[RMDB]
RNA sequence: GGGAACGACUCGAGUAGAGUCGAAAAUUCCUGUACAUAGUAAAUUUGCGGUGACGUUGAGGGCUAAUUUCUGACACUUCGAGAUAUGUUUUGUAGGAUUGUCGUCCUAUUUACGUGUUUAAGCCUGUUGAAGAUGUCCGUUCGCGGACAUCUUCAAAAAAGAAACAACAACAACAAC
Reactivity to DMS in 0.01 (KOAc 150mM, MgCl2 10mM, bicine 150mM(pH8.5), 24C), signal-to-noise 2, nucleotides 027 to 126: u000u010c000c000u000g000u100a120c070a020u010a050g020u030a040a080a080u020u020u030g010c160g040g000u010g000a090c000g060u010u000g020a060g010g020g020c020u020a070a060u030u030u000c020u000g010a000c040a060c080u000u000c090g000a200g010a100u060a050u010g000u020u000u010u000g040u000a070g060g010a070u030u020g040u000c110g000u000c000c000u000a000u000u000u010a000c160g030u030g010u020u000u010a080a020g030c030c040u000g000